The record gives the reactivity of an RNA of 177 nucleotides to DMS. Source: RMDB libraries RFM100 and RFMREP, as collected in RNAgym.
RNA sequence: GGGAACGACUCGAGUAGAGUCGAAAAACGGCCUCCGUACGCGGAGGCCGAGUUGAAUAUGCGGUGCGGUGGUAGCAACCGUCCCGACGUAAAGUCGAUUGUUACACCGCGCCGCAAAAGUUGACAAUUUUGUGAAUUUUUUCGAAAAUUCACAAAAAAAAGAAACAACAACAACAAC
Reactivity to DMS in 0.01 (KOAc 150mM, MgCl2 10mM, bicine 150mM(pH8.5), 24C), signal-to-noise 2, nucleotides 027 to 126: a160c000g000g060c010c010u000c000c000g040u010a140c200g020c040g020g030a010g050g030c000c000g000a000g000u000u000g000a120a080u010a160u010g010c020g000g000u000g020c000g000g000u010g000g020u000a000g000c010a000a030c110c070g000u010c070c130c010g020a020c060g020u040a120a090a200g000u000c000g000a180u000u000g010u000u000a020c000a050c000c000g000c010g000c000c000g000c000a000a000a040a050g020u000u000g000a130c140a100a160